[RMDB]
RNA sequence: GGGAACGACUCGAGUAGAGUCGAAAAGUGAGGUCGAGGAUUCCCCGUGGAGGGAGACAGCCACCGGGAUAGGACAGAGAAAUCACCUCCAGAGGACCCCUUCAGCGAACAUGAAGCGCACUGAGCCGAACCUAAUCCUUCGGGAUUAGGAAAAGAAACAACAACAACAAC
Reactivity to DMS in 0.01 (KOAc 150mM, MgCl2 10mM, bicine 150mM(pH8.5), 24C), signal-to-noise 9, nucleotides 027 to 129: g010u010g020a050g000g000u030c090g010a060g030g020a140u050u040c000c010c010c100g040u000g030g010a110g010g010g010a130g000a060c130a120g000c100c030a060c040c180g000g000g030a060u030a040g000g000a020c160a070g030a030g000a060a070a100u000c020a040c000c040u020c000c080a090g000a070g030g010a090c100c000c030c040u020u030c080a070g030c050g030a030a020c090a060u040g000a060a050g040c300g000c020a050c070u010g000a090g000c000c030g000a080a110
Reactivity to 2A3 in 0.01 (KOAc 150mM, MgCl2 10mM, bicine 150mM(pH8.5), 24C), signal-to-noise 9, nucleotides 027 to 129: g160u140g030a030g010g030u060c080g020a020g020g020a060u060u080c010c010c010c010g050u080g020g030a060g010g070g010a080g020a030c020a020g030c020c010a030c010c020g010g000g020a040u080a080g050g030a060c070a060g070a020g040a050a070a020u060c030a050c010c000u030c020c020a020g020a030g040g030a070c030c000c000c000u050u060c040a030g010c010g030a020a030c020a050u080g030a040a020g020c020g000c030a020c060u040g020a020g020c000c020g020a030a040